[RMDB]
RNA sequence: GGGAACGACUCGAGUAGAGUCGAAAAAUAGCGUGUUCAAAUUUAGGGGCAACUCGAAAGCUUUGCAGACGGCGCUCAAUCGAUACGAACAAUAUCCGGUCGUCGUACCUCUCAUACUCGGCAGCGAAAUUGUCGUCACCGCAAACAGUCUCAAACCGUGGGGAUUAUGUUUCGACAUAAUCCCCACAAAAGAAACAACAACAACAAC
Reactivity to 2A3 in 0.01 (KOAc 150mM, MgCl2 10mM, bicine 150mM(pH8.5), 24C), signal-to-noise 2, nucleotides 027 to 156: a000u200a020g050c020g020u070g050u030u060c040a060a170a270u180u150u080a090g000g000g030g000c040a030a030c110u040c100g110a110a060a000g000c020u000u050u040g010c010a010g040a050c020g030g000c010g080c060u000c100a100a130u060c000g040a010u040a130c050g200a160a030c050a050a040u060a110u160c190c080g010g010u060c010g000u000c000g010u000a020c000c000u000c000u000c070a040u040a250c030u030c000g030g000c000a020g010c070g080a080a060a040u060u060g040u040c000g000u000c020a010c080c000g080c040a030a050a000c030a030g130u120c010u050c070a300a030a050c030c050
Conditions: 150 mM KOAc, 10 mM MgCl2 and 150 mM bicine (pH 8.5), 24 C. The record gives the reactivity of an RNA of 207 nucleotides to 2A3. For 2A3 the reverse transcriptase was SuperScript II with manganese.